[RMDB]
RNA sequence: GGGAACGACUCGAGUAGAGUCGAAAAGAGUGAUUAGACAAAGGGGUAGAGCUACAUAUUAGAUAGCUGUAUAAUCGUUCAAGUUACAUCAAAACAUCUUCAAUAUUUAUUACUUACUUUCCUUUCUGCCAGAGUACGGUAUUCGUACCGUACUCAACAAUAGCUGUACAUUCGUGUACAGCUAUUGAAAAGAAACAACAACAACAAC
Reactivity to DMS in 0.01 (KOAc 150mM, MgCl2 10mM, bicine 150mM(pH8.5), 24C), signal-to-noise 4, nucleotides 027 to 156: g010a080g000u010g010a090u010u000a080g010a080c050a070a070a040g010g020g000g010u000a080g020a060g020c010u010a050c070a090u000a170u000u010a150g010a130u000a070g030c010u000g010u000a080u000a060a070u000c070g010u000u000c090a090a120g020u000u000a060c030a070u000c040a060a080a080a040c020a040u010c030u000u000c040a040a110u000a090u000u000u000a060u010u000a080c030u000u000a080c070u000u000u000c020c010u000u000u000c030u000g020c040c060a180g000a040g040u000a010c010g000g020u010a050u000u010c300g020u000a020c000c000g020u000a000c000u000c000a020a080
Reactivity to 2A3 in 0.01 (KOAc 150mM, MgCl2 10mM, bicine 150mM(pH8.5), 24C), signal-to-noise 9, nucleotides 027 to 156: g030a000g020u020g010a040u050u100a040g030a060c060a060a090a030g050g020g010g000u050a040g020a010g060c020u030a020c020a080u210a140u150u140a080g150a230u020a020g020c010u010g030u050a050u030a050a070u060c050g020u050u040c050a060a010g020u060u110a070c030a060u120c060a050a110a070a070c010a080u050c050u190u070c050a090a100u070a180u180u160u090a100u090u080a050c020u050u040a030c010u040u060u070c010c000u040u080u070c030u050g070c040c050a040g000a000g000u000a000c000g000g000u000a020u020u070c130g030u020a010c000c000g000u000a000c000u000c000a000a000